[RMDB]
Chemical mapping of a 177-nucleotide RNA with DMS.
The RNA was probed in 150 mM KOAc, 10 mM MgCl2 and 150 mM bicine (pH 8.5) at 24 C.
Values cover nucleotides 27 to 126.
RNA sequence: GGGAACGACUCGAGUAGAGUCGAAAAAAGCUGGUGGCCAGCAAGGCGCAUGACCAGGAAGGGUUCAGGAUCCUGGAGGGGCUCAUCACGCACAUGCCCCCGGAGAGCCUGCAGCAGUACAUGCCCACCUAUAACCCACCUUCGGGUGGGUUAUAGGAAAAGAAACAACAACAACAAC
Reactivity to DMS in 0.01 (KOAc 150mM, MgCl2 10mM, bicine 150mM(pH8.5), 24C), signal-to-noise 1, nucleotides 027 to 126: a130a050g000c000u020g030g030u010g030g000c000c000a130g020c210a120a060g000g000c130g000c060a060u020g010a120c060c050a040g000g050a160a110g010g000g020u000u000c020a020g010g010a100u000c020c020u000g020g030a100g020g010g010g020c010u010c170a120u000c150a110c280g060c180a060c110a120u020g000c000c000c030c000c040g060g000a110g010a060g040c000c000u000g020c030a000g000c020a100g000u000a020c110a090u000g000c070c000c020a120